[RMDB]
RNA sequence: GGGAACGACUCGAGUAGAGUCGAAAAGAUAUGGACGAAUGAACUACGGAUUGCGAUAACAUCCGCAGAUACUCUCUCGGAAACGAGAGAGAGUAGGAUGUUAUCGGAUCCGCAUUCGUCCUAAGUCGGAUAGUGUAGACUUCGGUCUACACUAUCCAAAAGAAACAACAACAACAAC
Reactivity to DMS in 0.01 (KOAc 150mM, MgCl2 10mM, bicine 150mM(pH8.5), 24C), signal-to-noise 2, nucleotides 027 to 126: g000a100u010a300u000g000g010a000c000g010a010a030u000g000a150a120c220u010a300c040g000g000a010u000u000g020c010g010a040u000a020a000c000a020u000c000c000g010c200a170g000a070u000a010c000u020c000u000c000u000c000g010g000a160a140a200c020g010a020g010a000g010a000g000a030g000u010a030g000g020a000u000g020u000u010a010u000c020g000g000a000u000c000c000g040c000a010u010u020c020g000u000c000c000u010a000a110g010u000c080
Reactivity to 2A3 in 0.01 (KOAc 150mM, MgCl2 10mM, bicine 150mM(pH8.5), 24C), signal-to-noise 3, nucleotides 027 to 126: g070a040u160a080u270g000g010a010c010g020a000a000u040g020a200a130c190u190a060c300g000g010a030u040u090g300c020g010a010u000a000a020c010a000u000c000c000g020c270a010g000a020u040a050c000u000c000u020c000u000c010g010g040a080a110a120c020g000a020g000a010g000a000g010a000g040u010a070g020g010a010u000g000u000u000a010u000c000g000g010a000u010c000c000g020c010a000u010u010c000g000u010c010c000u000a010a010g120u080c090